This 177-nucleotide RNA was probed chemically with DMS and 2A3. For 2A3, 1,043 sequencing reads were counted.

[RMDB]
RNA sequence: GGGAACGACUCGAGUAGAGUCGAAAAGCGCUUUGCGGCAUUGACCAUAGGCAACAUGUCCUUGAUCUCACCGAUUGCCGCAUCAAUGGUCUUACGUGUGCCACCAUGCUGCUGGAUGGUCAUGGCAUCCAUAGGUCCGCUUCGGCGGACCUAUGGAAAAAGAAACAACAACAACAAC
Reactivity to DMS in 0.01 (KOAc 150mM, MgCl2 10mM, bicine 150mM(pH8.5), 24C), signal-to-noise 2, nucleotides 027 to 126: g010c140g020c060u010u000u010g030c010g000g030c020a080u000u000g000a030c020c010a040u000a120g000g040c010a110a130c150a060u000g000u000c050c090u000u000g010a040u000c020u010c100a210c110c110g020a160u000u000g000c030c000g000c090a020u000c180a110a110u000g000g000u000c050u000u010a120c150g030u000g020u000g020c080c000a130c060c020a000u000g010c010u000g000c040u010g000g020a080u000g010g000u010c080a040u040g000g010c070a130
Reactivity to 2A3 in 0.01 (KOAc 150mM, MgCl2 10mM, bicine 150mM(pH8.5), 24C), signal-to-noise 1, nucleotides 027 to 126: g070c060g000c140u090u110u100g050c020g010g020c010a030u040u000g000a010c010c000a030u080a000g020g040c020a060a090c040a300u050g110u150c040c010u040u070g070a090u140c050u010c080a060c040c050g010a050u000u120g000c000c020g000c000a000u040c020a000a060u120g030g020u030c020u080u080a090c030g090u110g010u090g120c010c010a010c000c000a020u010g020c000u100g000c030u020g070g070a020u030g010g000u010c010a030u140g080g070c010a070

Background: For DMS, 1,252 sequencing reads were counted.